[RMDB]
RNA sequence: GGGAACGACUCGAGUAGAGUCGAAAAACAUACCAAACAAGCCAGUAUCAUUGGCUGUCUGCGUAUCCCCAACUCACAGACGGUCUCUCUAAGCUGGUAGAUCGAAAACCUAAAUACGAACAACUUAAAGGACAUCAUCUUUCGAGAUGAUGUCCUUAAAAGAAACAACAACAACAAC
Reactivity to DMS in 0.01 (KOAc 150mM, MgCl2 10mM, bicine 150mM(pH8.5), 24C), signal-to-noise 2, nucleotides 027 to 126: a050c110a120u000a120c030c070a110a120a130c160a040a050g000c000c000a000g020u000a220u000c300a130u000u000g000g080c000u000g000u010c000u000g160c000g040u050a070u000c000c020c000c060a010a100c070u000c070a040c030a000g000a070c000g050g000u050c010u000c020u000c190u000a070a250g020c010u000g000g000u000a130g010a110u070c210g000a020a090a030a050c050c000u090a020a100a070u000a010c120g120a180a060c090a060a150c050u000u020a060
Reactivity to 2A3 in 0.01 (KOAc 150mM, MgCl2 10mM, bicine 150mM(pH8.5), 24C), signal-to-noise 2, nucleotides 027 to 126: a000c020a020u060a060c000c080a020a030a050c040a050a100g080c000c000a000g010u010a150u200c090a190u040u020g000g000c000u000g000u010c020u000g020c050g000u090a190u130c020c020c020c000a010a040c020u030c000a060c000a000g020a070c000g000g000u010c000u000c000u010c040u150a000a050g050c010u000g060g000u020a050g050a060u060c010g040a060a020a020a020c000c050u160a050a120a000u140a100c100g120a140a040c020a010a090c020u010u070a050

Record summary:
Structure probing data (DMS and 2A3) for a 177-nucleotide construct. The RNA was probed in 150 mM KOAc, 10 mM MgCl2 and 150 mM bicine (pH 8.5) at 24 C. The 2A3 profile rests on 1,122 reads. For DMS the reverse transcriptase was MarathonRT.